[RMDB]
An RNA of 177 nucleotides, treated with DMS and 2A3 and read out base by base. Reactivities are given for positions 27 through 126. Conditions: 150 mM KOAc, 10 mM MgCl2 and 150 mM bicine (pH 8.5), 24 C. For 2A3 the reverse transcriptase was SuperScript II with manganese. The DMS profile rests on 1,252 reads.
RNA sequence: GGGAACGACUCGAGUAGAGUCGAAAAAACAGGCAUCAAAAGCUGAUGGCUCGCUUACUGAUUUUUAAUCGGGCCAGACACAAACAUGAAUUGUUCUCGUGCUGGGUAUAAUUUUUUUGUGGACAAAGGUGUAUGCCUUAUUCGUAAGGCAUACACCAAAAGAAACAACAACAACAAC
Reactivity to DMS in 0.01 (KOAc 150mM, MgCl2 10mM, bicine 150mM(pH8.5), 24C), signal-to-noise 2, nucleotides 027 to 126: a050a060c120a120g000g010c010a040u000c100a070a060a220a130g000c070u020g000a300u000g020g020c010u000c010g000c100u000u010a010c220u000g000a100u020u020u030u000u000a010a030u000c020g010g000g030c000c000a040g000a100c030a060c040a040a020a030c300a060u000g000a030a060u000u010g000u000u000c000u000c040g020u010g060c180u020g010g000g000u000a050u000a020a010u000u000u030u000u000u000u000g010u010g000g000a110c190a040a070a220
Reactivity to 2A3 in 0.01 (KOAc 150mM, MgCl2 10mM, bicine 150mM(pH8.5), 24C), signal-to-noise 1, nucleotides 027 to 126: a000a000c070a010g050g000c010a000u060c070a150a060a060a030g000c010u040g010a100u000g050g000c000u000c040g010c020u020u020a030c030u050g300a300u040u060u120u020u300a030a050u050c000g000g000g000c010c000a010g040a000c050a010c000a010a160a000c040a020u150g100a060a060u090u030g020u050u020c030u020c000g000u210g050c070u100g030g040g020u040a030u010a070a160u090u010u000u020u020u060u120g000u040g000g000a020c060a040a070a100